Structure probing data (DMS and 2A3) for a 207-nucleotide construct. For DMS, 2,271 sequencing reads were counted. DMS adducts were read by reverse transcription with MarathonRT. Conditions: 150 mM KOAc, 10 mM MgCl2 and 150 mM bicine (pH 8.5), 24 C. 2A3 adducts were read by reverse transcription with SuperScript II with manganese.
RNA sequence: GGGAACGACUCGAGUAGAGUCGAAAAACUCACGGUACGCCGUCAGAACGGUAGAAAAGAUGGUUUGAAAACCACGCCUUCUACCAAUAUAGUAAAUAAAUAGGCGGAGCGGUCAUACGUGACCGCAAAAACAUCCUUGGCUUCGGCCAAGGAUGAACUCAUUCAUCUUGUUCGCAAGAUGAAUGAGAAAAGAAACAACAACAACAAC
Reactivity to DMS in 0.01 (KOAc 150mM, MgCl2 10mM, bicine 150mM(pH8.5), 24C), signal-to-noise 1, nucleotides 027 to 156: a030c050u000c020a120c100g000g000u010a100c020g070c000c020g020u000c020a140g010a140a100c150g000g010u000a030g020a030a020a000a000g000a060u010g000g020u000u000u000g030a200a160a130a100c000c000a030c000g000c010c000u000u000c000u000a000c000c000a160a100u000a120u010a150g020u000a060a060a200u000a120a030a140u000a120g020g010c000g010g010a260g000c000g000g010u000c000a080u010a080c200g030u000g020a120c000c010g030c010a000a010a040a040a030c000a030u020c000c000u010u000g020g000c000u000u000c300g080g000c000c020a000a020g050g000a000u000g000a040a170
Reactivity to 2A3 in 0.01 (KOAc 150mM, MgCl2 10mM, bicine 150mM(pH8.5), 24C), signal-to-noise 3, nucleotides 027 to 156: a000c030u040c000a040c020g000g020u070a010c120g000c040c000g000u010c010a020g010a220a050c060g010g000u000a010g010a010a020a010a020g110a270u020g000g050u060u090u190g160a200a170a000a000c000c000a000c010g020c010c000u020u000c000u000a000c000c000a020a000u090a000u020a000g070u050a010a060a180u060a080a070a060u130a060g010g000c000g010g000a000g000c000g000g020u000c000a010u040a070c230g050u030g000a000c000c000g000c000a000a000a030a000a020c000a000u000c000c000u000u000g000g000c010u060u070c210g100g010c000c000a000a000g000g000a000u000g000a000a000